[RMDB]
RNA sequence: GGGAACGACUCGAGUAGAGUCGAAAACAUAGCAGUUAUAAUUAGAUUACCCUGAUGUCAGAUUAUAAUCCUGAUGUCCUCCAGCAGCUUGUCAAGGAUGGAAUCAAGACUAUCGAGCUUUUACAGCAGAGUCCGGAAGACUUUCAGAAGACGUACGCCAGCGAUAAUGAUUCGUCAUUAUCGCUGGAAAAGAAACAACAACAACAAC
Reactivity to 2A3 in 0.01 (KOAc 150mM, MgCl2 10mM, bicine 150mM(pH8.5), 24C), signal-to-noise 1, nucleotides 027 to 156: c040a030u110a000g070c010a000g040u130u140a100u050a300a130u080u230a030g120a190u050u140a020c000c000c040u050g000a030u040g020u050c050a030g000a010u070u190a140u160a300a000u030c010c030u010g000a000u000g060u000c020c000u000c030c010a050g040c000a000g000c060u100u120g030u040c060a050a050g030g000a010u110g000g040a010a010u100c040a020a090g010a080c020u100a070u170c050g000a060g040c070u000u060u070u010a050c110a010g060c020a000g000a000g100u000c010c030g010g010a020a000g000a000c000u170u150u080c110a000g000a070a030g080a040c160g000u180a020c100g060